RNA sequence: GGGAACGACUCGAGUAGAGUCGAAAAGCAUCUGCUGUUUCAGGGGAAGCAUCAGGAAACUUACAAUCAUGGUGGAAGGCAAAGGUGGAGCCUGCAUGUCACGUGGCCAGAGCAGCAGGAAGAGAGAGAAGGGGAAGUGCCACUCACUUUCAAACAACCACGUGACGUCUUUCGAGACGUCACGUGGAAAAGAAACAACAACAACAAC
Reactivity to 2A3 in 0.01 (KOAc 150mM, MgCl2 10mM, bicine 150mM(pH8.5), 24C), signal-to-noise 1, nucleotides 027 to 156: g060c010a030u100c010u020g010c000u020g050u080u100u100c040a080g120g000g010g020a030a010g000c020a000u000c000a000g000g080a090a110a010c000u100u150a050c040a160a160u180c080a060u160g060g000u040g010g010a040a040g010g000c000a080a060a060g080g010u070g010g000a000g030c030c070u010g120c020a150u130g140u140c050a000c080g100u050g040g030c000c020a000g000a010g090c010a000g020c000a000g020g000a050a050g000a000g000a000g000a000g010a000a050g040g010g000g000a000a080g050u070g040c010c000a030c000u030c020a040c070u100u140u130c040a030a100a070c020a070a010

The record gives the reactivity of an RNA of 207 nucleotides to 2A3.